[RMDB]
RNA sequence: GGGAACGACUCGAGUAGAGUCGAAAAGUCGCGGCCAUCAACGGGGCGGCGUUGGGCGGCGGCCUGGAGAUCGCGCUGGCGUGUCAUCACCGGAUCGCCGCCGACGUCAAGGGCAGCCAGCUCGGUCCGUCCCGUAUAGGUUCGCCUAUACGGGACGAAAAGAAACAACAACAACAAC
Reactivity to DMS in 0.01 (KOAc 150mM, MgCl2 10mM, bicine 150mM(pH8.5), 24C), signal-to-noise 2, nucleotides 027 to 126: g030u000c120g020c020g010g010c010c020a100u010c170a080a060c090g010g010g000g000c070g010g000c030g000u010u010g050g030g010c000g010g000c000g020g000c030c010u010g000g000a160g000a030u000c070g010c080g020c060u010g030g000c090g000u000g010u000c190a040u010c060a130c080c070g000g000a030u000c010g000c000c000g020c010c010g000a010c010g000u000c070a130a150g010g000g010c040a090g000c020c040a090g010c030u000c000g010g010u010c030
Reactivity to 2A3 in 0.01 (KOAc 150mM, MgCl2 10mM, bicine 150mM(pH8.5), 24C), signal-to-noise 2, nucleotides 027 to 126: g060u080c020g020c050g120g040c020c000a110u100c060a080a080c070g000g030g040g010c040g020g000c010g000u030u040g300g000g000c040g000g010c010g000g000c000c020u000g000g000a070g000a070u220c060g000c010g040c170u160g210g040c080g040u060g010u080c040a060u020c000a030c040c010g000g020a040u040c020g000c000c030g000c000c000g000a000c010g010u030c010a060a060g000g000g000c010a000g050c040c000a010g030c010u040c070g030g020u020c010

The record gives the reactivity of an RNA of 177 nucleotides to DMS and 2A3. Values cover nucleotides 27 to 126. 2A3 adducts were read by reverse transcription with SuperScript II with manganese. The RNA was probed in 150 mM KOAc, 10 mM MgCl2 and 150 mM bicine (pH 8.5) at 24 C. The 2A3 profile rests on 2,264 reads.